[RMDB]
RNA sequence: GGGAACGACUCGAGUAGAGUCGAAAACACAACAAUGUUGAGUCGGGUCUCAAGCCAUACGAUUUUCUUGCAUUGAUACCUGUUAUUGAAGGAGCUGGAGGUGUCAUAACUGAUUAACAAAACAAAACAUGACCAACCACUUCGGUGGUUGGUCAUGAAAAGAAACAACAACAACAAC
Reactivity to 2A3 in 0.01 (KOAc 150mM, MgCl2 10mM, bicine 150mM(pH8.5), 24C), signal-to-noise 1, nucleotides 027 to 126: c000a000c000a010a030c140a180a210u230g050u240u040g090a000g000u000c000g050g000g000u000c000u000c090a100a120g030c000c000a040u040a130c040g180a300u000u000u140u100c050u000u130g000c000a000u030u030g000a070u080a130c040c000u080g050u250u130a300u150u120g140a250a050g000g070a000g000c000u110g040g070a000g090g030u000g000u000c050a070u070a300a230c040u210g040a000u120u120a000a300c000a000a070a000a000c040a050a000a000a000

Structure probing data (2A3) for a 177-nucleotide construct. The reactions ran in a buffer of 150 mM KOAc, 10 mM MgCl2 and 150 mM bicine (pH 8.5), at 24 C. Values cover nucleotides 27 to 126.